RNA sequence: GGGAACGACUCGAGUAGAGUCGAAAACAGGGUUGGCUCGUUAGUCAGUAUUUUCAGCCCGGUGCUUUGGGGUUCACCGUCGGGGUACACAUCGUCCGCGGUGAGGAUGCCAAACACGCCAUCCAUGGAUUUCGCACAAAUUCGUUUGUGCGAAAUCAAAAGAAACAACAACAACAAC
Reactivity to DMS in 0.01 (KOAc 150mM, MgCl2 10mM, bicine 150mM(pH8.5), 24C), signal-to-noise 2, nucleotides 027 to 126: c090a150g000g040g020u000u000g020g010c090u000c090g020u000u000a040g000u000c090a070g020u000a060u000u010u000u010c130a120g000c000c010c010g000g020u000g000c260u000u010u010g000g010g000g000u000u010c000a010c010c000g010u000c010g030g000g010g030u000a130c200a070c270a070u020c070g000u010c000c000g000c040g000g010u000g000a020g020g020a130u030g010c030c010a000a030a030c050a060c040g010c060c020a070u000c030c050a140u000g000
Reactivity to 2A3 in 0.01 (KOAc 150mM, MgCl2 10mM, bicine 150mM(pH8.5), 24C), signal-to-noise 1, nucleotides 027 to 126: c020a020g000g000g030u050u060g020g020c010u010c100g060u060u060a060g120u100c100a000g060u070a140u070u120u110u110c040a000g030c020c000c000g000g010u030g010c060u020u020u000g040g010g000g000u050u000c000a000c020c000g180u220c110g010g000g010g020u200a040c100a020c010a170u170c050g120u000c000c010g000c010g000g010u000g000a000g000g000a000u110g140c000c000a000a010a020c020a020c040g000c010c000a100u030c000c010a080u090g090
Source: RMDB library OK2TRN, as collected in RNAgym. An RNA of 177 nucleotides, treated with DMS and 2A3 and read out base by base. Conditions: 150 mM KOAc, 10 mM MgCl2 and 150 mM bicine (pH 8.5), 24 C. DMS adducts were read by reverse transcription with MarathonRT. High DMS reactivity at an A or C suggests that its Watson-Crick edge is free.